Source: RMDB library OK1LIB, as collected in RNAgym. Structure probing data (2A3 and DMS) for a 177-nucleotide construct. Reactivities are given for positions 27 through 126. The RNA was probed in 150 mM KOAc, 10 mM MgCl2 and 150 mM bicine (pH 8.5) at 24 C.
[RMDB]
RNA sequence: GGGAACGACUCGAGUAGAGUCGAAAAUUGCCAACUGGCCAAGACCUGCCCUGUGCAGCUGUGGGUUGAUUCCACACCCCCGCCCGGCACCCGCGUCCGCGCCAUGGCCAUCUACAAGCAGUCACAGCAAAUAGGGCUUUUUCGAAAGCCCUAUUUGAAAAGAAACAACAACAACAAC
Reactivity to 2A3 in 0.01 (KOAc 150mM, MgCl2 10mM, bicine 150mM(pH8.5), 24C), signal-to-noise 5, nucleotides 027 to 126: u070u050g030c010c010a050a070c120u130g030g000c030c010a100a010g040a100c020c000u010g020c010c010c030u100g060u110g020c050a020g030c030u040g010u060g030g000g040u060u070g080a160u180u060c010c010a010c000a020c030c010c000c000c000g000c020c010c000g020g000c020a030c000c010c000g020c020g040u000c010c000g020c010g010c000c010a050u030g000g000c000c010a060u040c040u090a070c050a120a030g020c030a010g050u060c030a020c020a070g070
Reactivity to DMS in 0.01 (KOAc 150mM, MgCl2 10mM, bicine 150mM(pH8.5), 24C), signal-to-noise 5, nucleotides 027 to 126: u020u040g000c010c020a110a100c100u010g000g020c000c040a100a100g010a090c100c030u000g000c060c020c090u020g000u010g010c060a090g030c110u000g000u000g000g000g000u020u040g000a140u030u030c010c020a050c030a190c020c010c010c010c050g000c040c020c030g010g020c050a040c030c010c030g000c100g010u010c030c020g000c060g000c030c020a080u000g000g000c050c020a060u020c040u010a090c100a050a120g020c040a050g000u000c040a070c080a090g010